Annotation
Chemical mapping of a 207-nucleotide RNA with 2A3. Conditions: 150 mM KOAc, 10 mM MgCl2 and 150 mM bicine (pH 8.5), 24 C.
RNA sequence: GGGAACGACUCGAGUAGAGUCGAAAAAUCAUACUGUAGUCUUAACCUUCAAUGAGUCAAUAUCGUUAGCCUCAUCUGACAGCUGACGCACUCGUUCAGACUACAGUAUGUGUACGGUCCUUCAAUCAGGUGUCAGAUGAGCCUGAUAGAAGGACAAGUCAGUGGCGUCAUUCGUGACGCCACUGACAAAAGAAACAACAACAACAAC
Reactivity to 2A3 in 0.01 (KOAc 150mM, MgCl2 10mM, bicine 150mM(pH8.5), 24C), signal-to-noise 2, nucleotides 027 to 156: a000u030c000a000u000a010c000u000g000u020a000g000u010c020u040u010a050a050c000c040u180u210c270a160a260u250g000a000g020u040c070a070a190u060a140u300c100g000u000u010a010g020c010c050u100c070a230u140c070u150g040a070c030a050g000c000u000g000a000c000g000c090a050c010u000c020g030u030u000c010a000g000a000c000u000a000c000a000g010u000a000u000g000u010g010u060a000c080g050g000u000c000c000u010u000c020a030a050u020c000a000g000g000u000g120u060c020a030g110a300u080g050a280g000c000c000u000g000a000u000a020g000a000a000g000g020a000c000a000a000